[RMDB]
RNA sequence: GGGAACGACUCGAGUAGAGUCGAAAAGAUAUGGACGAGAAGCUGAUGAACUACCUGUCCCAUCGGAAACGAUGGAACAGGCAUCAGUAGUUCUCGUCCUAAGUCAAAGUCCUGCUUCGGCAGGACACUUGUUCCUAUCGUUCGCGAUAGGAACAAGAAAAGAAACAACAACAACAAC
Reactivity to DMS in 0.01 (KOAc 150mM, MgCl2 10mM, bicine 150mM(pH8.5), 24C), signal-to-noise 3, nucleotides 027 to 126: g020a030u000a300u010g010g000a010c000g010a000g010a040a120g000c010u000g000a020u010g010a070a030c140u030a300c040c000u000g010u000c010c000c000a010u000c010g000g000a160a090a170c000g010a000u000g000g010a000a000c000a000g000g000c000a000u000c010a000g030u000a130g040u010u000c000u000c020g000u000c000c010u000a010a060g010u000c040a100a120a200g000u000c000c000u000g000c010u000u020c210g050g010c000a010g020g000a010c000a000
Reactivity to 2A3 in 0.01 (KOAc 150mM, MgCl2 10mM, bicine 150mM(pH8.5), 24C), signal-to-noise 2, nucleotides 027 to 126: g020a010u080a040u190g000g010a000c010g010a000g010a030a010g050c010u020g000a010u020g030a070a110c090u140a120c300c000u000g000u020c000c000c000a000u000c000g030g030a070a070a030c000g000a010u000g000g000a000a000c000a000g000g060c000a000u010c000a000g000u050a020g010u020u020c000u010c000g010u000c000c000u000a010a010g010u000c040a120a060a070g000u020c000c000u000g000c000u050u070c230g200g000c010a000g010g000a000c010a000